[RMDB]
RNA sequence: GGGAACGACUCGAGUAGAGUCGAAAAGUGAUGUGGACGUUGUCGUAGCGCUGCGGGCCUGGUUUGAGAGUGCUAUUGUUGGCCCGCCCGUUCCAAGUUGCGUAGUGGACAGCUGGGGCCUAUGCGAAAGCUGGGCCUCACGGUCCAUAAUGUGGCACAUUCGGAGAAGCUUCGGCUUCUCCGAAUGAAAAGAAACAACAACAACAAC
Reactivity to 2A3 in 0.01 (KOAc 150mM, MgCl2 10mM, bicine 150mM(pH8.5), 24C), signal-to-noise 1, nucleotides 027 to 156: g080u070g050a040u080g030u060g090g000a010c020g010u010u040g070u080c100g060u100a090g000c040g040c140u150g010c020g010g000g030c040c020u150g060g000u150u080u130g060a090g000a030g010u040g000c060u030a130u140u150g100u030u090g000g040c010c000c010g000c000c000c000g030u030u000c000c010a080a030g050u070u030g070c050g000u070a020g030u060g010g000a030c030a030g030c150u010g000g000g030g000c020c040u050a110u300g020c020g030a120a030a000g010c010u020g010g000g000c000c000u000c000a000c010g000g000u010c000c010a000u040a000a040u060g000u010g090g000c010a030